[RMDB]
RNA sequence: GGGAACGACUCGAGUAGAGUCGAAAACUUUAUUAUGGAAAGAUCGCCCACGGGGAAGGAGGUUGCGAUGGAUUGCCCUGUUAUCUGACUCGAAAGGGUGGGGGCGCGUUAAGAGUAUCCCCUUAGGAUAAAUAUUUAAUUUCGAUUAAAUAUUUAUAAAAGAAACAACAACAACAAC
Reactivity to DMS in 0.01 (KOAc 150mM, MgCl2 10mM, bicine 150mM(pH8.5), 24C), signal-to-noise 1, nucleotides 027 to 126: c010u000u010u030a040u050u030a070u050g010g000a080a060a060g000a070u010c100g000c030c030c040a110c110g000g010g000g000a080a050g000g000a070g000g000u000u000g020c070g000a070u040g030g000a160u000u010g010c030c020c000u030g020u020u000a000u010c120u000g010a070c030u000c000g010a120a090a100g000g000g010u000g010g010g000g010g030c160g000c030g010u010u010a100a090g010a200g000u010a080u030c000c000c020c040u040u010a100g010g000